[RMDB]
RNA sequence: GGGAACGACUCGAGUAGAGUCGAAAAGGCGGGCGAGUGAGGUCUGUGGGCGAAAGCGCCUUGUAGGCGCGCCGUGUGAAUGCUAUGUGCGGAUAGGGAGAUAGCGGCCAGCGUAGUAUCGUCAUAGGCGGCUUGCGUCGUUCGCGAUGUAAGCCGCAAAAGAAACAACAACAACAAC
Reactivity to DMS in 0.01 (KOAc 150mM, MgCl2 10mM, bicine 150mM(pH8.5), 24C), signal-to-noise 6, nucleotides 027 to 126: g000g010c070g000g000g010c100g000a060g020u010g000a100g000g000u000c050u000g020u040g010g000g000c040g000a080a080a100g010c010g020c000c010u010u060g010u030a140g000g000c000g010c000g010c060c040g000u010g020u000g010a070a100u030g010c040u020a020u010g010u020g000c020g010g000a090u000a080g010g000g000a090g000a090u020a090g010c050g000g000c050c040a080g000c050g000u000a040g010u010a040u010c040g000u010c060a080u010a060g000
Reactivity to 2A3 in 0.01 (KOAc 150mM, MgCl2 10mM, bicine 150mM(pH8.5), 24C), signal-to-noise 5, nucleotides 027 to 126: g050g020c030g000g030g020c050g010a080g040u080g040a040g020g040u020c020u030g040u050g010g010g000c010g040a070a020a010g010c000g000c000c010u080u170g180u140a030g000g000c000g000c010g000c000c010g040u070g020u030g050a110a040u080g000c020u030a030u130g050u050g040c010g010g010a030u080a050g010g010g000a040g010a010u050a020g010c000g010g020c000c010a000g000c020g000u030a010g010u040a070u060c030g020u000c020a050u020a040g110

The data come from the RNA Mapping Database (RMDB), library OK1LIB. An RNA of 177 nucleotides, treated with DMS and 2A3 and read out base by base. The RNA was probed in 150 mM KOAc, 10 mM MgCl2 and 150 mM bicine (pH 8.5) at 24 C. 2A3 adducts were read by reverse transcription with SuperScript II with manganese. The DMS profile rests on 20,537 reads. As a SHAPE reagent, 2A3 marks flexible, mostly unpaired nucleotides at the ribose 2'-OH. The 2A3 profile rests on 10,533 reads.